[RMDB]
The record gives the reactivity of an RNA of 177 nucleotides to 2A3 and DMS. It was measured as part of the RMDB library RFMREP. Values cover nucleotides 27 to 126. The reactions ran in a buffer of 150 mM KOAc, 10 mM MgCl2 and 150 mM bicine (pH 8.5), at 24 C. DMS (dimethyl sulfate) methylates the pairing face of unpaired adenines and cytosines. High 2A3 reactivity points to a flexible backbone, as in loops and unpaired stretches.
RNA sequence: GGGAACGACUCGAGUAGAGUCGAAAAGGCGGCGUGCUGCUCAGCCCGUUUCUGAUCUACGUGUUGAUGGCGCUGUUGCUCACCGGCGUGCUGCGCCUGGUGGUCCAGGCCACCCCCCUGGGGCGCUACGUAUUAAAAACUUCGGUUUUUAAUACGUAAAAGAAACAACAACAACAAC
Reactivity to 2A3 in 0.01 (KOAc 150mM, MgCl2 10mM, bicine 150mM(pH8.5), 24C), signal-to-noise 2, nucleotides 027 to 126: g080g010c040g000g010c060g040u090g010c030u050g020c020u010c060a030g040c000c050c000g010u020u040u030c060u070g140a160u070c060u090a050c080g080u070g020u120u110g070a070u020g040g000c100g020c140u040g030u100u130g020c030u000c020a030c040c010g030g030c000g020u130g060c140u120g030c020g000c020c010u030g000g000u020g010g030u020c010c030a050g050g000c000c000a040c040c000c040c000c000c000u030g000g010g040g000c030g020c010u010
Reactivity to DMS in 0.01 (KOAc 150mM, MgCl2 10mM, bicine 150mM(pH8.5), 24C), signal-to-noise 3, nucleotides 027 to 126: g010g020c030g000g010c040g010u000g020c050u000g000c110u010c040a080g020c020c030c040g020u000u000u010c050u000g010a080u010c080u000a050c110g020u010g000u000u000g020a070u000g000g000c010g010c010u010g010u010u000g030c030u000c030a080c040c030g010g000c020g030u010g020c170u000g010c030g000c000c010u010g050g010u000g010g000u010c120c050a050g000g000c020c010a120c030c010c020c060c020c020u000g020g010g000g010c150g000c120u010